[RMDB]
RNA sequence: GGGAACGACUCGAGUAGAGUCGAAAAUGAGGUAAUGGGCCCUAGGAAAUGGAGGUGAAUACUGAUAUUGGCAGAUGGCCUAUCCUAUGAGACUUGCUUCUGCUUAAGGAACCACUGAAUGUAAACCGACUGGAGCGUUAUUCGUAACGCUCCAGUCAAAAGAAACAACAACAACAAC
Reactivity to 2A3 in 0.01 (KOAc 150mM, MgCl2 10mM, bicine 150mM(pH8.5), 24C), signal-to-noise 1, nucleotides 027 to 126: u060g030a000g000g030u090a110a150u150g000g030g030c010c010c040u030a040g100g100a070a040a080u090g010g000a040g000g040u100g110a120a070u130a300c000u000g030a010u010a030u170u030g070g000c000a020g030a150u140g080g070c000c000u010a040u130c000c020u080a120u170g080a100g020a060c040u070u100g070c000u100u000c020u030g050c040u120u090a010a050g010g010a040a010c050c030a010c060u020g080a070a030u140g000u110a050a040a070c020c020
Reactivity to DMS in 0.01 (KOAc 150mM, MgCl2 10mM, bicine 150mM(pH8.5), 24C), signal-to-noise 2, nucleotides 027 to 126: u010g000a130g020g010u000a080a040u000g010g000g010c000c020c050u000a120g010g020a100a040a060u030g010g050a300g020g010u010g010a120a040u000a130c040u000g000a240u030a080u000u000g010g010c040a070g000a080u000g030g020c040c060u000a020u020c030c060u000a060u000g010a160g000a090c090u010u000g030c040u000u000c060u000g030c080u000u000a070a060g000g010a080a100c080c040a060c030u000g020a080a040u010g010u000a040a100a100c100c070